[RMDB]
RNA sequence: GGGAACGACUCGAGUAGAGUCGAAAAUCUGGCCUUCGGGCCAGAAAAAAAGAUAUGGACGAAGCGUGAAGCGAUAAGAUGAAUGGUCGGAAACGACCAUCAUCUUUUGACGCUUCACCUUCGUCCUAAGUCAAAAAGCUACCGUUCGCGGUAGCAACUUCUGUGGAGGAUUCGUCCUCCACAGAAGAAAAGAAACAACAACAACAAC
Reactivity to 2A3 in 0.01 (KOAc 150mM, MgCl2 10mM, bicine 150mM(pH8.5), 24C), signal-to-noise 1, nucleotides 027 to 156: u030c000u000g000g010c000c010u040u030c300g020g040g000c010c030a000g000a000a000a000a000a000a000a000g060a020u070a050u110g020g000a010c000g000a010a000g050c040g160u000g000a000a000g000c000g010a010u040a020a000g000a000u000g040a220a110u020g040g010u010c010g000g040a100a000a080c010g000a000c010c000a000u000c000a000u000c000u030u010u010u000g030a040c030g000c000u000u010c000a000c000c000u000u000c000g000u000c000c000u000a000a010g000u010c000a080a050a000a050a000g020c000u000a010c010c000g000u110u170c300g000c000g040g000u040a000g290c000a010a000